[RMDB]
RNA sequence: GGGAACGACUCGAGUAGAGUCGAAAAGAUAUGGAACACUCCCCACCCAUGUGCACGCGUUGAAAUUAUUCCGAUCUCGGAAACGAGAUCGGAAUAAUGGAGCGUGCCAUGGAGGUGUUCCUAAGUCGAUAAGUAAGAUGUUCGCAUCUUACUUAUCAAAAGAAACAACAACAACAAC
Reactivity to 2A3 in 0.01 (KOAc 150mM, MgCl2 10mM, bicine 150mM(pH8.5), 24C), signal-to-noise 4, nucleotides 027 to 126: g070a120u300a270u300g000g010a000a000c000a010c040u280c100c000c000c030a020c020c010c000a010u020g210u300g040c010a000c000g000c000g210u280u060g040a040a040a000u010u000a000u010u000c000c000g000a000u000c010u000c000g020g070a080a110a080c030g000a000g000a000u000c000g000g000a000a000u000a000a000u000g010g010a030g000c000g000u000g000c000c010a010u000g000g000a010g020g010u000g000u000u020c000c000u030a160a030g300u300c170
Reactivity to DMS in 0.01 (KOAc 150mM, MgCl2 10mM, bicine 150mM(pH8.5), 24C), signal-to-noise 5, nucleotides 027 to 126: g020a120u000a140u010g010g010a020a010c000a010c010u010c210c010c010c050a300c250c010c010a010u000g000u020g010c000a010c000g010c000g000u000u020g010a140a140a010u000u010a000u000u000c000c010g000a010u000c000u000c010g010g000a110a070a230c000g010a010g000a000u000c000g000g000a010a000u010a000a000u000g000g000a120g010c000g030u000g000c020c010a000u010g010g000a040g040g000u000g000u000u000c000c000u000a040a120g010u000c170